This 177-nucleotide RNA was probed chemically with DMS and 2A3. 2A3 adducts were read by reverse transcription with SuperScript II with manganese. The RNA was probed in 150 mM KOAc, 10 mM MgCl2 and 150 mM bicine (pH 8.5) at 24 C.
RNA sequence: GGGAACGACUCGAGUAGAGUCGAAAAGUACUCGCAAUCCGCUAUAGCGGGGCCGAAUUCCCACUCGAGGUGGGACGACUUUAUGGUCUGACUUAAGGGAUUGGUGUUGACGCCCGGGUCCUGCGCACGAUUUCAAUACGUUCGCGUAUUGAAAUCGAAAAGAAACAACAACAACAAC
Reactivity to DMS in 0.01 (KOAc 150mM, MgCl2 10mM, bicine 150mM(pH8.5), 24C), signal-to-noise 4, nucleotides 027 to 126: g020u020a060c040u020c040g020c060a070a090u040c010c010g010c060u010a130u020a060g010c020g030g010g010g010c070c000g000a090a110u020u000c000c000c000a020c030u000c150g000a110g010g030u000g000g020g000a030c300g000a070c070u000u030u020a100u050g010g010u000c000u000g000a160c050u020u020a160a060g020g000g010a080u000u010g010g010u010g000u000u000g020a160c090g010c020c000c020g020g000g020u010c020c010u020g000c070g000c100a170
Reactivity to 2A3 in 0.01 (KOAc 150mM, MgCl2 10mM, bicine 150mM(pH8.5), 24C), signal-to-noise 6, nucleotides 027 to 126: g020u030a050c020u000c040g050c020a020a030u020c000c030g040c120u080a030u110a200g010c030g030g000g000g000c010c000g040a020a050u130u030c000c000c000a010c010u070c090g260a090g090g120u010g000g000g010a010c020g050a040c040u100u150u120a170u300g030g000u010c020u030g020a170c020u070u110a070a080g020g030g010a040u010u060g040g010u070g060u040u100g030a040c030g020c000c000c000g020g000g000u020c010c010u030g010c050g000c020a040